[RMDB]
RNA sequence: GGGAACGACUCGAGUAGAGUCGAAAAGAUAUGGAUGAUUAGGCUUUUGACGCCUUCCGGUUCGGAAACGAACCGAAGGCGAUAAGCCUGGGUCAUCCUAAGUCAAACGCUGUGCUUCGGCACAGCGCCACCUAUGGCUGUUCGCAGCCAUAGGUGGAAAAGAAACAACAACAACAAC
Reactivity to DMS in 0.01 (KOAc 150mM, MgCl2 10mM, bicine 150mM(pH8.5), 24C), signal-to-noise 2, nucleotides 027 to 126: g000a020u010a300u010g000g000a030u000g010a000u000u000a020g020g010c010u000u000u010u000g010a300c070g030c000c000u000u010c120c110g020g020u000u000c000g010g000a120a060a120c000g010a020a000c010c000g000a020a020g000g010c000g010a020u000a030a020g030c010c000u000g000g000g000u000c010a000u010c000c010u000a020a080g010u000c020a160a150a300c000g020c000u010g000u000g000c000u000u000c150g030g000c000a030c000a000g030c000g010
Reactivity to 2A3 in 0.01 (KOAc 150mM, MgCl2 10mM, bicine 150mM(pH8.5), 24C), signal-to-noise 2, nucleotides 027 to 126: g030a000u080a080u200g020g000a000u000g000a010u000u070a010g020g010c040u200u130u160u300g300a170c090g000c020c000u000u000c130c080g000g020u000u010c000g010g020a070a090a060c020g000a010a020c020c000g000a000a010g040g010c010g020a010u020a000a010g040c010c000u020g060g020g030u000c000a010u030c000c010u010a120a010g060u020c080a210a050a060c040g010c010u000g000u010g010c020u060u070c300g140g000c020a000c000a000g000c000g000

This 177-nucleotide RNA was probed chemically with DMS and 2A3. As a SHAPE reagent, 2A3 marks flexible, mostly unpaired nucleotides at the ribose 2'-OH. The 2A3 profile rests on 3,962 reads. The data come from the RNA Mapping Database (RMDB), library TTRDES. For DMS the reverse transcriptase was MarathonRT. DMS (dimethyl sulfate) methylates the pairing face of unpaired adenines and cytosines. The RNA was probed in 150 mM KOAc, 10 mM MgCl2 and 150 mM bicine (pH 8.5) at 24 C.